Notes:
The record gives the reactivity of an RNA of 177 nucleotides to DMS. The data come from the RNA Mapping Database (RMDB), library M2PK50.
[RMDB]
RNA sequence: GGGAACGACUCGAGUAGAGUCGAAAACUGGAUUCUUUCGAGAAUCCAGCAUGUCUAGUCGCUAGCGAACGAUCUACGCUAGCGACUAGACUUUAUUGAUCGCAUUUGCCUCUUUCGAGAGGCAAAAACAUUCCUGCAUCUUCGGAUGCAGGAAUGUAAAAGAAACAACAACAACAAC
Reactivity to DMS in 0.01 (KOAc 150mM, MgCl2 10mM, bicine 150mM(pH8.5), 24C), signal-to-noise 2, nucleotides 027 to 126: c020u000g000g000a020u000u010c000u000u000u020c230g010a020g010a020a000u010c000c000a010g020c140a060u010g000u000c000u000a010g010u000c000g020c000u010a000g020c000g000a110a090c170g010a110u030c130u020a090c000g000c010u000a000g010c010g000a000c000u010a000g010a010c010u000u000u010a070u010u010g010a120u020c110g010c200a160u000u010u000g010c000c000u000c000u000u000u010c140g000a020g000a010g000g000c020a000a010a010a080